Chemical mapping of a 177-nucleotide RNA with DMS. For DMS the reverse transcriptase was MarathonRT. For DMS, 1,181 sequencing reads were counted. Values are in units of 0.01, from 0 to 300, in steps of 10. Source: RMDB library OK2TRN, as collected in RNAgym.

RNA sequence: GGGAACGACUCGAGUAGAGUCGAAAAAGGCUCUUUGUGUGGUGUCAGGAUGUGGUAGCUCUGAAGUGUCUACUGAGUAGAGCCCUGAACUGUUUUGUGCUUCAAUUGUAGACUAACAUAAAUGCCAAACAUGUUGUGCGUUCGCGCACAACAUGUUAAAAGAAACAACAACAACAAC
Reactivity to DMS in 0.01 (KOAc 150mM, MgCl2 10mM, bicine 150mM(pH8.5), 24C), signal-to-noise 1, nucleotides 027 to 126: a200g020g000c020u000c050u010u000u030g050u000g050u000g000g020u000g010u010c030a030g000g060a110u000g010u000g020g020u000a170g000c050u010c040u000g000a090a040g000u000g010u000c040u020a050c010u020g000a080g010u020a150g000a110g000c000c030c030u000g000a060a120c130u010g020u000u000u000u000g010u000g030c040u000u000c060a120a110u020u050g000u000a060g010a020c040u020a070a040c090a070u000a010a050a120u000g000c030c070a130